Structure probing data (DMS and 2A3) for a 170-nucleotide construct. For 2A3 the reverse transcriptase was SuperScript II with manganese. Source: RMDB library 15KLIB, as collected in RNAgym. Values cover nucleotides 27 to 129. 2A3 is a SHAPE reagent: it acylates the 2'-hydroxyl of flexible nucleotides of all four kinds.
[RMDB]
RNA sequence: GGGAACGACUCGAGUAGAGUCGAAAAGAAACUUCUGGCCUCUCACCUGCUUAUGCACCAACAUAUGUUAGUGUUGAUGACAAGUAUAAGACGAGUGAUGAGCUUUGCGUGAAUCUUAAUUUACCCGAUAGCACCACGUUCGCGUGGUGCAAAAGAAACAACAACAACAAC
Reactivity to DMS in 0.01 (KOAc 150mM, MgCl2 10mM, bicine 150mM(pH8.5), 24C), signal-to-noise 3, nucleotides 027 to 129: g010a080a100a090c030u040u010c040u010g060g040c030c020u030c090u020c020a040c000c030u020g000c040u010u020a020u000g020c010a050c090c000a060a000c020a070u030a100u050g080u130u090a110g060u010g010u000u010g020a100u110g000a130c110a120a090g040u000a050u050a000a000g010a140c110g010a050g030u040g000a080u050g000a050g010c070u060u040u030g030c300g000u040g020a040a100u040c040u040u050a000a000u020u020u080a050c120c000c000g000a100u000a150
Reactivity to 2A3 in 0.01 (KOAc 150mM, MgCl2 10mM, bicine 150mM(pH8.5), 24C), signal-to-noise 6, nucleotides 027 to 129: g000a000a030a000c030u040u010c000u080g080g000c030c050u000c000u000c000a020c010c010u050g020c020u020u010a000u000g000c000a000c040c000a020a000c030a030u160a030u250g280u170u160a200g040u010g000u020u010g020a080u020g020a030c040a110a070g000u010a000u010a030a010g050a100c040g010a010g040u020g030a050u170g000a000g010c000u090u060u120g050c050g020u010g060a000a080u020c030u020u060a090a040u180u090u180a090c000c000c000g060a080u120a070